[RMDB]
RNA sequence: GGGAACGACUCGAGUAGAGUCGAAAAGGCCGUACGUACAUGCACGAUCUGGCCGCGCCGAGCUGAUCGAUCGAUCGCGCCGUAGGCCUGAUCUGAGCGCGCGCGCGCUGAUGAUCGUACAGCGCUCCCUAUCGUCCACGUUCGCGUGGACGAUAGGAAAAGAAACAACAACAACAAC
Reactivity to 2A3 in 0.01 (KOAc 150mM, MgCl2 10mM, bicine 150mM(pH8.5), 24C), signal-to-noise 2, nucleotides 027 to 126: g070g010c000c040g040u050a030c010g020u070a050c040a120u140g110c080a010c090g040a030u020c030u070g000g000c020c020g020c010g000c030c030g030a060g030c110u110g020a090u060c060g050a150u080c120g030a030u030c000g000c010g000c040c030g060u110a220g050g070c020c010u050g000a050u020c020u070g050a020g000c020g000c020g010c050g020c010g000c020g030c050u050g040a030u060g010a080u040c020g030u040a030c020a010g020c050g040c020u070c000
Reactivity to DMS in 0.01 (KOAc 150mM, MgCl2 10mM, bicine 150mM(pH8.5), 24C), signal-to-noise 2, nucleotides 027 to 126: g000g000c000c020g040u010a040c020g010u010a160c100a060u000g010c120a110c150g020a030u010c010u000g030g000c010c010g000c010g010c180c070g020a100g000c080u000g010a080u010c010g010a080u020c150g000a030u000c020g030c090g020c150c010g020u000a070g080g010c000c000u000g010a030u000c030u000g020a040g030c000g010c030g010c230g000c160g010c050g000c000u010g020a060u020g000a200u000c000g000u000a070c030a060g000c020g010c050u010c040

An RNA of 177 nucleotides, treated with 2A3 and DMS and read out base by base. Reactivities are given for positions 27 through 126. Values are in units of 0.01, from 0 to 300, in steps of 10.